[RMDB]
Structure probing data (DMS) for a 177-nucleotide construct. It was measured as part of the RMDB library TTRINS. DMS adducts were read by reverse transcription with MarathonRT. The reactions ran in a buffer of 150 mM KOAc, 10 mM MgCl2 and 150 mM bicine (pH 8.5), at 24 C.

RNA sequence: GGGAACGACUCGAGUAGAGUCGAAAAGAUAUGGAACAUACAGACGUCAGUUCGUGGCUUCGAUGAGCUAAGUGUCGGAAACGACACUAGCGAGAAGCACGAACUGACGUCUGUAUGUUCCUAAGUCCGAAAAGGCAUAGUUCGCUAUGCCUUUUCGAAAAGAAACAACAACAACAAC
Reactivity to DMS in 0.01 (KOAc 150mM, MgCl2 10mM, bicine 150mM(pH8.5), 24C), signal-to-noise 1, nucleotides 027 to 126: g000a070u000a300u000g000g010a010a020c010a000u000a000c000a000g010a020c000g000u000c000a020g050u000u010c000g030u020g010g010c000u010u000c020g000a300u030g030a270g000c000u000a040a050g020u000g030u000c000g030g000a100a140a300c040g050a040c050a000c010u000a000g040c000g000a130g000a010a040g000c010a040c000g000a000a020c000u010g000a000c000g010u000c000u010g000u000a000u000g000u010u010c020c000u000a000a110g000u000c050